[RMDB]
RNA sequence: GGGAACGACUCGAGUAGAGUCGAAAAUAAGUCUAGUUCGCUAGACUUACUAUCGGGAAAACAGCCUCCCGGCUCGAUCAGGCGGAUUCCGUGCAAGCGCUGCAACACACGUAUUCGUACGUGUGAAUUGCUACAUUUCAUUCGUGAAAUGUAGCAAAAAAGAAACAACAACAACAAC
Reactivity to 2A3 in 0.01 (KOAc 150mM, MgCl2 10mM, bicine 150mM(pH8.5), 24C), signal-to-noise 3, nucleotides 027 to 126: u050a010a010g000u000c000u010a000g010u020u050c160g040c080u010a000g000a010c000u010u000a000c000u030a030u170c020g010g010g020a050a090a010a070c010a030g010c000c000u000c000c020c010g040g000c020u010c010g030a080u080c070a030g060g080c020g010g070a190u190u030c040c010g040u010g060c020a030a040g010c060g000c150u060g020c020a070a080c010a010c000a000c020g000u000a010u020u070c240g040u020a010c000g000u000g000u000g000a000a050
Reactivity to DMS in 0.01 (KOAc 150mM, MgCl2 10mM, bicine 150mM(pH8.5), 24C), signal-to-noise 5, nucleotides 027 to 126: u010a000a000g010u000c000u000a010g010u000u000c250g030c000u000a000g000a020c000u000u000a010c070u010a070u000c040g030g010g000a040a040a090a160c060a060g000c030c010u000c010c010c020g010g000c040u000c020g010a110u000c110a110g000g010c030g000g010a170u000u000c040c030g020u000g000c050a030a050g010c090g000c050u000g020c090a080a190c010a010c000a000c000g010u000a010u010u010c190g010u000a000c000g000u010g010u000g000a030a070
The record gives the reactivity of an RNA of 177 nucleotides to 2A3 and DMS. The DMS profile rests on 5,918 reads. The RNA was probed in 150 mM KOAc, 10 mM MgCl2 and 150 mM bicine (pH 8.5) at 24 C. For 2A3, 3,984 sequencing reads were counted. 2A3 adducts were read by reverse transcription with SuperScript II with manganese. DMS adducts were read by reverse transcription with MarathonRT.